[RMDB]
RNA sequence: GGGAACGACUCGAGUAGAGUCGAAAAUGGUAAGAGGCAGUCCUGUGAGCAGGCCGGCUGCAGGGCCUCCAGGGCUGUGGGGCAGGCUGCACAGGGGCUGGUGGGUCCCAUGCCUGGGGGUCUGGGAAUAGUCUCUAGGCUGCUGUCCUGGAGGAGACCUACGACUUUUAUUCGUAAAAGUCGUAGGAAAAGAAACAACAACAACAAC
Reactivity to 2A3 in 0.01 (KOAc 150mM, MgCl2 10mM, bicine 150mM(pH8.5), 24C), signal-to-noise 1, nucleotides 027 to 156: u140g040g000u100a080a020g070a080g030g050c000a000g060u120c040c040u090g030u080g130a060g010c090a040g090g000c080c000g040g060c070u090g030c080a060g040g020g040c000c010u000c000c000a010g030g060g000c200u160g010u010g010g010g010g020c000a020g020g010c020u050g030c030a010c040a090g070g010g010g070c030u010g070g060u110g030g120g010u040c000c000c060a000u050g040c030c000u030g010g000g000g000g010u030c030u010g010g000g010a000a020u050a080g050u020c000u000c000u000a020g060g000c020u100g010c010u070g090u080c010c010u010g010g020a010g000g010a000g060a010
Structure probing data (2A3) for a 207-nucleotide construct.
The reactions ran in a buffer of 150 mM KOAc, 10 mM MgCl2 and 150 mM bicine (pH 8.5), at 24 C.
It was measured as part of the RMDB library OK3TST.
2A3 adducts were read by reverse transcription with SuperScript II with manganese.